[RMDB]
RNA sequence: GGGAACGACUCGAGUAGAGUCGAAAAAGGAGGAUCUCGACGUUGGCCACGCUACCACCCCGUCCUCGAGACUAUAAGCUCGCCUACGUGCGCCGUGUAGGGCGGGACACGCGCAUGGACUAUGAUGGAAAUGCUUAAGCUUCGGCUUAAGCAUUUCAAAAGAAACAACAACAACAAC
Reactivity to 2A3 in 0.01 (KOAc 150mM, MgCl2 10mM, bicine 150mM(pH8.5), 24C), signal-to-noise 1, nucleotides 027 to 126: a000g040g010a030g020g040a050u020c000u030c070g080a060c040g010u010u040g070g000c000c000a050c030g010c020u050a100c030c060a070c000c000c000c000g020u040c010c050u000c020g040a080g010a100c100u120a080u010a300a070g030c000u030c050g050c050c050u080a030c010g030u060g030c000g020c070c070g010u020g010u010a040g020g000g020c010g050g010g000a000c010a000c010g020c010g000c000a030u010g030g000a050c060u140a110u190g120a060u120g150
Reactivity to DMS in 0.01 (KOAc 150mM, MgCl2 10mM, bicine 150mM(pH8.5), 24C), signal-to-noise 2, nucleotides 027 to 126: a060g010g000a050g010g020a100u000c020u020c050g020a090c150g010u010u000g000g000c020c030a040c100g020c040u010a080c120c060a180c090c030c010c030g000u000c040c040u010c080g020a080g000a060c130u010a130u000a100a110g000c040u000c040g000c040c040u000a090c070g020u000g000c030g020c070c070g010u000g010u000a080g000g010g020c000g000g010g010a020c020a010c030g030c020g000c020a020u000g000g020a130c210u020a080u000g010a080u010g000

Notes:
The data come from the RNA Mapping Database (RMDB), library OK2TRN. Chemical mapping of a 177-nucleotide RNA with 2A3 and DMS. For DMS, 2,148 sequencing reads were counted. Reactivities are given for positions 27 through 126. For 2A3, 1,721 sequencing reads were counted.